[RMDB]
RNA sequence: GGGAACGACUCGAGUAGAGUCGAAAAGGACUGCGCAGUCCGGCAACAUCAGCAGAGAGCCCGCUAUACGUGACGGAUUGGCUGAAGCGUACAGAAAUAUUGAGCCUCCUGCAAGAGGCAGCCAAGUAAAACGUACGUGAGUUCGCUCACGUACGAACCAAUAGGUAAUGUUCGCAUUACCUAUUGGAAAAGAAACAACAACAACAAC
Reactivity to DMS in 0.01 (KOAc 150mM, MgCl2 10mM, bicine 150mM(pH8.5), 24C), signal-to-noise 4, nucleotides 027 to 156: g020g010a040c010u010g030c110g040c060a070g020u000c020c000g000g010c030a120a080c030a100u000c050a150g060c030a080g020a110g040a120g010c030c000c030g010c030u000a090u000a060c030g020u000g020a290c030g000g000a260u000u000g020g020c000u000g010a070a300g010c070g010u000a130c010a050g000a080a070a110u000a140u000u010g000a170g000c000c020u000c000c000u000g030c150a090a110g000a070g030g020c000a050g000c030c000a010a120g000u000a030a050a080a170c030g030u000a020c000g020u010g000a030g030u000u010c300g000c000u000c000a010c000g000u000a000c020g000a000a020
Reactivity to 2A3 in 0.01 (KOAc 150mM, MgCl2 10mM, bicine 150mM(pH8.5), 24C), signal-to-noise 8, nucleotides 027 to 156: g020g010a020c040u080g040c150g030c160a030g010u000c000c000g010g020c010a040a050c010a120u130c020a010g010c050a010g070a010g010a020g080c020c020c030g000c010u070a060u030a090c080g030u060g050a030c030g060g060a090u040u050g050g010c020u030g030a070a010g010c020g020u030a040c030a040g180a080a130a020u260a090u150u160g050a030g030c000c010u010c020c020u070g070c040a080a030g000a000g040g000c010a000g000c010c010a020a010g040u130a040a080a020a020c010g000u000a010c000g000u000g000a010g010u040u120c200g010c110u000c000a000c000g000u000a000c000g000a000a010